[RMDB]
Structure probing data (2A3 and DMS) for a 177-nucleotide construct.
High DMS reactivity at an A or C suggests that its Watson-Crick edge is free.
Conditions: 150 mM KOAc, 10 mM MgCl2 and 150 mM bicine (pH 8.5), 24 C.
For 2A3 the reverse transcriptase was SuperScript II with manganese.
The data come from the RNA Mapping Database (RMDB), library M2PK50.
DMS adducts were read by reverse transcription with MarathonRT.
RNA sequence: GGGAACGACUCGAGUAGAGUCGAAAACCCGUCGUGUUCGCACGACGGGAACUACCGAGAAUGGAGCUCGGUAUAAAUCUCCAACCCUUGGAAACAAGGGAACAAUCGCCACUUUCGAGUGGCGAAAGAAUUCAUAGUGCUUCGGCACUAUGAAUUCAAAAGAAACAACAACAACAAC
Reactivity to 2A3 in 0.01 (KOAc 150mM, MgCl2 10mM, bicine 150mM(pH8.5), 24C), signal-to-noise 1, nucleotides 027 to 126: c050c030c010g000u000c020g000u020g020u030u080c240g060c080a000c000g030a000c000g010g000g020a020a040c030u070a030c000c010g000a000g050a080a170u070g050g000a010g040c000u000c020g030g000u000a010u040a030a000a000u020c010u000c020c030a180a240c020c000c000u000u020g000g020a050a010a000c020a010a010g010g000g000a000a010c020a010a100u050c000g000c010c010a020c000u060u050u090c150g040a010g000u000g000g010c000g020a010a010a000
Reactivity to DMS in 0.01 (KOAc 150mM, MgCl2 10mM, bicine 150mM(pH8.5), 24C), signal-to-noise 1, nucleotides 027 to 126: c010c000c000g010u000c000g020u000g000u000u050c200g000c020a000c000g050a000c010g000g000g030a020a030c060u000a300c020c020g000a000g020a080a220u000g000g000a080g000c000u000c000g040g000u000a100u020a030a050a030u000c010u000c000c000a000a300c010c000c000u000u040g000g000a180a160a250c000a010a000g000g000g010a130a030c200a090a160u000c000g040c010c000a000c000u000u000u010c150g000a000g000u000g000g010c000g000a000a030a090